[RMDB]
RNA sequence: GGGAACGACUCGAGUAGAGUCGAAAACAGCUACCGCGCACACGGCCUGCCUGUGUCAGAAAAUCUGUUGGAGCAGGAUUUUUACGCCAGUGGCCCGAACCAGAAGUGGGCAGGAGACAUCACGUACCUCCAUGCGGAAAUUCGUUUCCGCAUGGAGAAAAGAAACAACAACAACAAC
Reactivity to DMS in 0.01 (KOAc 150mM, MgCl2 10mM, bicine 150mM(pH8.5), 24C), signal-to-noise 1, nucleotides 027 to 126: c080a070g000c040u000a070c050c050g000c090g000c080a070c040a070c070g000g000c020c010u010g000c140c020u000g000u030g040u010c060a160g010a070a000a080a030u000c040u010g060u010u000g000g010a120g030c000a190g000g000a000u000u000u000u000u000a070c130g000c000c040a110g020u000g010g010c050c030c020g000a070a110c090c060a040g020a130a070g050u010g020g020g020c020a040g010g000a070g000a040c130a050u020c130a050c120g000u030a100c130